[RMDB]
RNA sequence: GGGAACGACUCGAGUAGAGUCGAAAAAGCGAUGAUACGUCAUCGCAACGAUUGCCUGAUCGUAAAACAGGAGACGGCCGUGGCUGCGACCACGUAAAAAAGCGUAACGUGGUCUACGGACCACGAAAAAAGCGCGGAACGUUCGCGUUCCGCGCAAUCAGAAGGAGUAGUUCGCUACUCCUUCUGAAAAAGAAACAACAACAACAAC
Reactivity to 2A3 in 0.01 (KOAc 150mM, MgCl2 10mM, bicine 150mM(pH8.5), 24C), signal-to-noise 1, nucleotides 027 to 156: a000g000c000g010a000u020g000a000u010a040c170g060u000c010a000u000c000g010c010a000a010c010g010a010u010u030g020c020c010u010g000a020u020c040g100u130a040a020a000a090c030a010g060g000a020g040a050c090g110g010c030c010g010u000g020g000c080u070g020c020g020a050c000c000a000c000g020u050a040a040a000a000a000a000g090c010g030u070a100a020c040g000u000g040g000u000c010u020a050c170g030g000a030c010c000a010c010g050a070a000a000a000a000a000g010c000g010c020g000g000a000a000c000g010u060u070c200g000c000g090u000u000c000c000g000c000g000c000a000a010